RNA sequence: GGGAACGACUCGAGUAGAGUCGAAAAGAAUGAUACCGACCAUCUCGUCCUCUUCGAAGCGCUCCAGCGCGUCGCUAAGGCCGGAUUUCACGCCGCGUGGCAAAUCGCACUGGGUAAUAUCGCCGUUACAAGACUUAUCUUUCGAGAUAAGUCUUGUAAAAGAAACAACAACAACAAC
Reactivity to DMS in 0.01 (KOAc 150mM, MgCl2 10mM, bicine 150mM(pH8.5), 24C), signal-to-noise 8, nucleotides 027 to 126: g010a110a080u010g000a090u020a080c060c040g010a080c070c040a080u010c040u010c040g010u010c020c010u000c050u010u010c040g010a110a070g000c020g010c100u020c030c030a040g000c050g010c020g010u000c060g010c040u000a070a050g000g020c050c040g010g000a090u010u010u010c120a110c120g000c020c000g000c050g010u000g000g020c070a050a060a100u020c040g020c010a030c020u000g000g000g000u010a060a080u020a070u010c020g010c010c050g000u000u000
Reactivity to 2A3 in 0.01 (KOAc 150mM, MgCl2 10mM, bicine 150mM(pH8.5), 24C), signal-to-noise 9, nucleotides 027 to 126: g090a030a090u150g050a040u070a080c030c010g020a030c020c010a040u030c030u020c040g070u030c000c010u030c010u050u080c050g060a080a020g020c010g000c030u040c050c010a020g000c010g000c020g050u020c030g000c040u040a060a050g080g010c040c020g020g030a030u080u090u170c080a060c090g010c020c000g010c030g040u060g010g000c030a070a060a040u090c030g000c010a010c040u040g020g020g030u060a050a040u060a040u160c050g010c050c000g010u010u000
Source: RMDB libraries RFM100 and RFMREP, as collected in RNAgym. This 177-nucleotide RNA was probed chemically with DMS and 2A3. Conditions: 150 mM KOAc, 10 mM MgCl2 and 150 mM bicine (pH 8.5), 24 C. DMS adducts were read by reverse transcription with MarathonRT.